Description
Structure probing data (2A3) for a 177-nucleotide construct. Source: RMDB library RFM100, as collected in RNAgym.
[RMDB]
RNA sequence: GGGAACGACUCGAGUAGAGUCGAAAAUACCUGUCCUAUGCAUGGUAGGCACUGGCCCAGAAGGCUGCCACAGAAACACUGUGACUCAUGGGCCCUGUUCCUGUGUCCCAGGCUCAGGGAUAAAUUUCUGAUUGAGGACAUUCGUGUCCUCAAUCAGAAAAGAAACAACAACAACAAC
Reactivity to 2A3 in 0.01 (KOAc 150mM, MgCl2 10mM, bicine 150mM(pH8.5), 24C), signal-to-noise 2, nucleotides 027 to 126: u120a010c000c000u010g070u020c020c000u060a040u230g040c010a000u010g000g070u060a170g040g000c000a000c010u080g030g000c000c000c000a020g080a130a030g070g030c200u110g060c040c000a000c000a000g110a100a150a000c120a000c060u000g000u000g000a010c000u050c110a080u050g040g010g010c010c030c010u150g000u000u000c000c010u020g010u010g010u000c000c010c000a000g060g000c000u010c100a010g010g000g010a000u050a020a070a030u000u030u020